[RMDB]
The record gives the reactivity of an RNA of 177 nucleotides to 2A3 and DMS. For DMS, 25,757 sequencing reads were counted. For DMS the reverse transcriptase was MarathonRT. It was measured as part of the RMDB library OK1LIB. The 2A3 profile rests on 33,660 reads.
RNA sequence: GGGAACGACUCGAGUAGAGUCGAAAAAUUGCCAACGGCGAUCGUAUUCGCAUCUUCAACGAUCGGGGUGAAGUGCAUAUCGAAGCGAAGGUGACGCCGCGCAUGAUGCCGGGCGUCGUCGCGCUGGGCUAGUGAUAUGAUUCGUCAUAUCACUAGCAAAAGAAACAACAACAACAAC
Reactivity to 2A3 in 0.01 (KOAc 150mM, MgCl2 10mM, bicine 150mM(pH8.5), 24C), signal-to-noise 9, nucleotides 027 to 126: a000u130u130g080c010c010a100a030c040g080g000c020g030a040u020c020g050u070a200u070u140c080g010c040a060u080c020u090u050c030a060a040c030g250a240u180c110g050g040g060g020u030g030a040a020g030u050g040c030a040u080a060u250c080g070a060a010g020c020g050a150a080g040g020u030g000a000c010g000c020c010g100c020g000c050a110u300g090a120u300g190c070c020g070g020g000c000g000u010c000g000u010c010g000c010g000c010u040g010g100
Reactivity to DMS in 0.01 (KOAc 150mM, MgCl2 10mM, bicine 150mM(pH8.5), 24C), signal-to-noise 7, nucleotides 027 to 126: a090u020u010g000c000c010a160a130c090g010g010c010g000a110u000c030g000u020a090u010u030c090g000c050a030u060c040u010u000c030a070a020c020g010a090u030c120g020g010g010g010u000g000a040a040g040u000g000c040a060u010a060u040c070g000a090a070g010c010g010a070a110g000g020u010g010a020c000g010c000c000g010c200g040c020a170u030g020a140u050g000c020c030g000g010g000c000g010u000c000g010u000c010g000c010g010c020u000g000g010